[RMDB]
RNA sequence: GGGAACGACUCGAGUAGAGUCGAAAAGGGCGUUUCGACGCCCGUGAUGCCGUAGGCGUUCUGUGAUGAGCAACAGCGUGGUCCAGCUUCGAAAGAGGCUGGAGCCACGACAUGCUUGCAUGGACGCCUAAACGGGUAAGCUCCACUUCGGUGGAAAGGUUCCAUUAUAUUUCGAUAUAAUGGAACCAAAAGAAACAACAACAACAAC
Reactivity to DMS in 0.01 (KOAc 150mM, MgCl2 10mM, bicine 150mM(pH8.5), 24C), signal-to-noise 2, nucleotides 027 to 156: g000g040g040c000g020u000u000u010c240g000a040c010g020c000c000c050g000u000g000a090u000g030c000c020g000u010a030g020g030c000g010u030u000c000u010g050u000g010a170u000g000a010g010c000a040a080c020a300g010c000g030u000g000g020u000c000c000a000g010c000u000u000c010g020a160a120a300g010a010g000g000c000u000g000g000a010g000c010c020a010c010g020a000c060a240u010g000c000u000u000g000c000a050u010g010g000a030c000g000c000c000u010a000a010a030c020g020g000g040u010a040a170g020c040u000c000c000a000c030u000u010c200g060g010u000g000g000a010a080a130
Reactivity to 2A3 in 0.01 (KOAc 150mM, MgCl2 10mM, bicine 150mM(pH8.5), 24C), signal-to-noise 4, nucleotides 027 to 156: g030g010g000c040g010u070u120u220c300g090a030c010g010c000c000c020g000u050g010a060u150g040c010c010g020u010a010g000g010c010g060u200u080c060u050g060u040g090a300u050g000a100g000c020a030a100c100a120g060c010g000u010g000g000u000c000c000a010g000c000u000u010c010g100a140a080a060g000a000g010g010c000u010g000g010a020g020c000c000a000c000g010a020c000a010u040g000c000u000u000g000c010a000u020g010g010a010c020g000c000c000u020a010a010a000c000g010g000g000u030a090a070g070c080u000c020c000a000c020u120u080c220g070g000u010g010g000a070a070a050